[RMDB]
RNA sequence: GGGAACGACUCGAGUAGAGUCGAAAAUACAGAAGUUUUAGUUUGGGAAGAAUGUGUGGCCAAUAGUGCGGUGAUAUUACAAAACAAUGAAUUCGGAACUCUUAUAGAUUGGGCACCUCGAGGUCAAAAGGUUCAAGGUAUUCGUACCUUGAACCUUAAAAGAAACAACAACAACAAC
Reactivity to DMS in 0.01 (KOAc 150mM, MgCl2 10mM, bicine 150mM(pH8.5), 24C), signal-to-noise 2, nucleotides 027 to 126: u060a120c140a120g000a040a030g020u040u050u000u020a080g010u010u000u010g000g000g000a020a100g010a130a060u040g000u010g030u000g000g020c040c120a070a130u020a050g050u010g000c080g000g020u010g000a110u010a060u000u050a060c180a080a080a110a100c170a080a080u030g040a060a180u000u000c080g000g010a060a060c000u020c010u000u090a070u030a090g000a100u000u030g000g020g000c020a090c040c040u000c070g000a070g000g000u040c040a000a010
Reactivity to 2A3 in 0.01 (KOAc 150mM, MgCl2 10mM, bicine 150mM(pH8.5), 24C), signal-to-noise 2, nucleotides 027 to 126: u300a000c030a060g100a050a030g070u020u020u020u020a120g060u060u100u170g020g050g000a020a110g070a100a100u180g110u020g050u040g010g050c000c000a120a000u070a030g140u100g110c030g000g030u060g010a020u070a080u200u020a050c040a050a020a070a010c060a100a040u240g100a050a080u090u020c000g080g000a050a030c020u000c030u090u270a190u020a150g030a090u120u070g000g000g030c080a000c000c050u050c020g000a010g030g010u000c040a090a030